Structure probing data (2A3 and DMS) for a 177-nucleotide construct.
The RNA was probed in 150 mM KOAc, 10 mM MgCl2 and 150 mM bicine (pH 8.5) at 24 C.
Reactivities are given for positions 27 through 126.
For DMS the reverse transcriptase was MarathonRT.
High 2A3 reactivity points to a flexible backbone, as in loops and unpaired stretches.
The DMS profile rests on 1,322 reads.
DMS (dimethyl sulfate) methylates the pairing face of unpaired adenines and cytosines.
RNA sequence: GGGAACGACUCGAGUAGAGUCGAAAAGAUAUGGACGCAUCGGGAGUUGAGAGAUUCGGAAACGAAUUGGUAACGAAGAACGAGUGCGUCCUAAGUCAAAACUAGGAUAGCUUCGGCUAUCCUAGAACUCGUACAUACCCUUCGGGGUAUGUACGAGAAAAGAAACAACAACAACAAC
Reactivity to 2A3 in 0.01 (KOAc 150mM, MgCl2 10mM, bicine 150mM(pH8.5), 24C), signal-to-noise 1, nucleotides 027 to 126: g020a000u000a000u050g000g000a000c000g020c000a010u030c030g000g020g070a090g040u040u060g030a160g010a020g010a140u000u010c030g000g050a020a020a030c010g000a000a030u040u020g150g070u220a070a030c050g210a300a050g070a020a020c010g000a140g240u070g010c010g010u000c000c000u000a000a000g000u000c020a100a020a010a120c000u000a000g000g030a000u000a000g000c020u040u080c250g120g000c000u010a010u090c000c000u020a000g000a000a000
Reactivity to DMS in 0.01 (KOAc 150mM, MgCl2 10mM, bicine 150mM(pH8.5), 24C), signal-to-noise 2, nucleotides 027 to 126: g010a010u000a130u000g020g000a020c010g000c010a040u000c010g010g000g000a060g020u000u000g000a180g010a140g020a040u000u000c000g030g000a020a010a040c000g010a000a010u000u000g030g020u030a040a030c020g040a120a120g000a110a140c010g000a020g000u020g020c000g030u000c000c000u000a000a040g000u020c020a090a040a090a160c010u000a000g010g050a030u000a010g000c000u010u000c210g020g010c000u000a000u000c000c000u000a010g000a030a060